Structure probing data (2A3) for a 177-nucleotide construct. 2A3 adducts were read by reverse transcription with SuperScript II with manganese.
RNA sequence: GGGAACGACUCGAGUAGAGUCGAAAAUGACGAUCGUCAUCAGCCCGUCGAUCACCGCGGACAGGAACGAUGUCGUCAUCGUCUGCUGGAUCGUGUCGAUCGAGCCGAAGCGCGACACGACGUCGCAGGCUGAGCUCGGCUUCGGCCGAGCUCAGCCAAAAGAAACAACAACAACAAC
Reactivity to 2A3 in 0.01 (KOAc 150mM, MgCl2 10mM, bicine 150mM(pH8.5), 24C), signal-to-noise 1, nucleotides 027 to 126: u050g010a000c070g120a300u220c080g020u020c010a110u000c000a020g100c000c020c070g090u080c010g060a140u150c030a070c090c110g120c010g040g020a000c000a070g000g000a010a030c010g060a040u010g080u060c120g040u120c000a020u020c000g000u020c030u040g140c020u020g010g060a070u100c000g000u020g110u100c080g010a070u100c030g040a050g010c130c030g000a030a080g010c070g000c020g130a000c090a000c040g300a120c130g060u060c000g020c060a030
Source: RMDB library OK2TST, as collected in RNAgym. Conditions: 150 mM KOAc, 10 mM MgCl2 and 150 mM bicine (pH 8.5), 24 C.